RNA sequence: GGGAACGACUCGAGUAGAGUCGAAAACAGUCCAACGCUUCACUGAGCCAUUUUACCUCACCCCCACUGGUGUUCGCCGACCGUUGACUAUUCUCUACAAACCACAAAGACAUUCGAACACUAUACCCCUCGCUCCAUAGUUCGCUAUGGAGCGAGGAAAAGAAACAACAACAACAAC
Reactivity to 2A3 in 0.01 (KOAc 150mM, MgCl2 10mM, bicine 150mM(pH8.5), 24C), signal-to-noise 2, nucleotides 027 to 126: c040a000g120u080c040c010a070a010c020g070c020u030u020c000a060c080u080g030a010g010c000c000a020u010u060u050u080a110c000c000u020c030a060c010c020c020c010c000a040c010u010g000g050u090g040u040u010c050g010c000c000g010a040c000c020g030u020u040g000a000c020u070a100u060u020c000u020c010u050a050c010a070a050a080c010c000a020c060a060a230a020g070a030c050a070u080u060c020g000a030a000c050a020c000u060a080u070a120c000c000